[RMDB]
RNA sequence: GGGAACGACUCGAGUAGAGUCGAAAAGGGGUCGAGGUGCGGAGGAGCCAUUGUCAGAGCCCAUAGCUGAAGCCUCCACGGCUAUGUGCGCUCUUGGAUUUAUGGCUUGAAACACCUCGACGGAGGCACCCAAAAUCGUGAUCUUCGGAUCACGAAACCAGUUACUAUCCUUCGGGAUAGUAACUGGAAAAGAAACAACAACAACAAC
Reactivity to 2A3 in 0.01 (KOAc 150mM, MgCl2 10mM, bicine 150mM(pH8.5), 24C), signal-to-noise 1, nucleotides 027 to 156: g140g010g030g000u000c000g000a020g000g000u010g000c040g010g140a180g170g100a010g040c000c000a020u010u030g060u040c180a140g000a000g010c000c000c000a010u000a000g000c000u030g030a080a020g010c010c010u020c000c010a040c020g000g000c010u010a000u020g150u160g030c160g020c010u000c000u050u220g030g000a010u010u200u170a010u030g000g000c000u030u070g020a030a000a000c000a000c000c000u000c000g000a000c000g000g000a000g000g000c010a080c010c010c000a020a040a000a210u060c000g000u000g010a010u000c010u100u100c300g120g010a000u000c000a010c000g020a010a000a000